[RMDB]
RNA sequence: GGGAACGACUCGAGUAGAGUCGAAAAAUCUAGCGCGUAGGCGGCGAUGGCCGCACCGGUUGCCAGUUCGGCGAGGACUUUGGCUUGCGGAUCAUGGGCUGCGAUCAGCGCGCUGGCGAUCGCCGACCUAAAGAGCGAGUUUCGACUCGCUCUUUAGAAAAGAAACAACAACAACAAC
Reactivity to 2A3 in 0.01 (KOAc 150mM, MgCl2 10mM, bicine 150mM(pH8.5), 24C), signal-to-noise 4, nucleotides 027 to 126: a000u030c020u010a000g010c030g000c020g070u060a070g090g080c010g000g000c010g020a020u020g040g000c000c010g000c010a010c010c030g190g060u140u070g000c010c000a040g020u030u060c060g080g040c160g090a120g030g020a040c000u200u180u170g020g010c000u020u050g010c010g020g070a160u080c020a050u080g060g260g000c000u020g000c040g090a130u130c060a020g000c000g000c000g000c030u020g010g000c030g040a030u090c040g000c120c000g060a140c000
Reactivity to DMS in 0.01 (KOAc 150mM, MgCl2 10mM, bicine 150mM(pH8.5), 24C), signal-to-noise 6, nucleotides 027 to 126: a070u010c020u000a030g000c030g020c050g020u000a090g010g010c010g010g020c010g000a040u000g000g000c000c000g010c010a030c150c050g010g000u010u000g000c050c030a080g000u000u000c060g020g030c150g000a140g010g010a060c060u000u010u010g040g010c100u000u000g010c010g000g010a100u000c060a050u000g000g020g030c010u000g000c020g010a090u020c100a160g010c050g000c030g010c010u010g010g000c110g000a070u000c030g010c010c020g000a110c150
Structure probing data (2A3 and DMS) for a 177-nucleotide construct. For 2A3, 6,189 sequencing reads were counted. DMS adducts were read by reverse transcription with MarathonRT.